[RMDB]
RNA sequence: GGGAACGACUCGAGUAGAGUCGAAAAGCACUACAGGGCGUAACGGCUGGGUGUAACCCAACUCUAGGUGUGCUGAUUAGCGGGCUUGACUCCGUAACAAAUAGGCACUGGUGGUAAAAAGCAUCCCUGACCAUAUACAUCUUCGGAUGUAUAUGAAGUUGAACGUUUAGUUCGCUAAACGUUCAACAAAAGAAACAACAACAACAAC
Reactivity to 2A3 in 0.01 (KOAc 150mM, MgCl2 10mM, bicine 150mM(pH8.5), 24C), signal-to-noise 4, nucleotides 027 to 156: g020c010a020c060u210a080c070a060g010g050g050c030g130u130a110a040c070g090g000c020u030g020g010g020u030g050u060a070a060c000c010c010a070a110c030u050c040u140a030g030g010u020g000u040g100c020u000g010a140u050u010a020g020c030g000g000g030c050u110u160g020a070c020u000c050c000g000u040a050a010c010a020a050a040u110a010g010g000c010a010c060u020g010g050u030g020g020u040a110a090a040a010a000g050c020a090u040c040c000c000u050g040a060c010c020a010u000a000u000a000c000a000u010c000u030u040c120g080g030a000u000g000u000a000u000a000u000g010a010a020
Reactivity to DMS in 0.01 (KOAc 150mM, MgCl2 10mM, bicine 150mM(pH8.5), 24C), signal-to-noise 1, nucleotides 027 to 156: g040c020a150c020u000a060c070a030g020g010g010c000g030u000a060a130c070g000g000c010u000g000g020g000u010g020u000a070a300c010c010c010a030a030c060u010c060u000a090g060g060u010g000u000g000c020u030g010a110u000u010a060g000c060g050g020g000c020u010u010g010a150c080u000c000c010g000u000a010a140c070a040a090a160u000a060g000g050c040a010c000u000g030g040u000g000g010u000a050a040a070a130a060g000c060a150u000c030c010c010u000g000a180c070c000a050u000a010u000a000c000a020u000c000u010u000c300g040g000a030u000g040u000a000u010a000u000g000a030a080